An RNA of 207 nucleotides, treated with 2A3 and read out base by base. Conditions: 150 mM KOAc, 10 mM MgCl2 and 150 mM bicine (pH 8.5), 24 C. Source: RMDB library OK3TST, as collected in RNAgym.
RNA sequence: GGGAACGACUCGAGUAGAGUCGAAAAAAAGCAUGUCUGCCGAUCAUGAAGCAAUGCCAGCGCGUCACCGUCUCGCUGCGCGACAACGAUCUAGAACGUUUGCUGUGCAUGCUCCGCAGCAACAAUUCGUGCGAUUCAAAGCUUUUCAUGCCGUUCACCCGUCUAAGGUUUUCGAACCUUAGACGGGAAAAGAAACAACAACAACAAC
Reactivity to 2A3 in 0.01 (KOAc 150mM, MgCl2 10mM, bicine 150mM(pH8.5), 24C), signal-to-noise 2, nucleotides 027 to 156: a030a000a000g020c030a020u080g010u030c060u120g060c040c020g010a070u060c030a070u100g160a060a000g010c070a100a150u120g010c000c010a020g010c000g010c000g020u050c040a090c130c050g090u010c000u010c070g020c020u120g030c050g000c030g120a020c040a110a060c020g060a040u000c020u170a090g050a140a020c030g070u100u100u110g000c000u020g000u080g070c050a050u080g000c000u000c020c020g000c000a010g040c000a030a040c060a080a060u070u070c040g070u110g100c040g040a000u100u000c070a120a090a130g010c000u080u030u030u100c030a040u050g040c000c000g020u080u070c020a030